[RMDB]
RNA sequence: GGGAACGACUCGAGUAGAGUCGAAAAGGGCCGUUCACUGGAUCCGAAGCCUCUAGAAGGAUAAUAUAGGCACUCCAUACCUUACUCCGACUCAAUACGUCCCCGUCGUACAGAAUGGUAACAUAUCGAACACAACCUAACUUCGGUUAGGUUGUAACCCCGUAUGAUCUUUCGAGAUCAUACGGGGAAAAGAAACAACAACAACAAC
Reactivity to 2A3 in 0.01 (KOAc 150mM, MgCl2 10mM, bicine 150mM(pH8.5), 24C), signal-to-noise 1, nucleotides 027 to 156: g000g000g050c050c010g140u100u040c050a140c200u050g070g000a100u150c080c000g000a050a020g010c050c010u020c090u120a220g070a280a010g020g000a050u050a300a190u090a190u080a100g000g000c020a020c060u020c020c010a020u060a160c000c030u030u030a030c030u000c010c000g050a010c020u020c020a030a070u090a130c000g010u000c000c010c000c000g050u150c050g000u020a060c020a130g060a130a110u080g090g010u040a050a000c020a060u060a180u110c020g000a090a000c020a000c000a060a010c000c000u000a000a000c000u020u020c010g040g000u000u000a000g000g000u000u000g020u000a000a000
An RNA of 207 nucleotides, treated with 2A3 and read out base by base. Values are in units of 0.01, from 0 to 300, in steps of 10. Source: RMDB library M2RFPK, as collected in RNAgym. For 2A3 the reverse transcriptase was SuperScript II with manganese.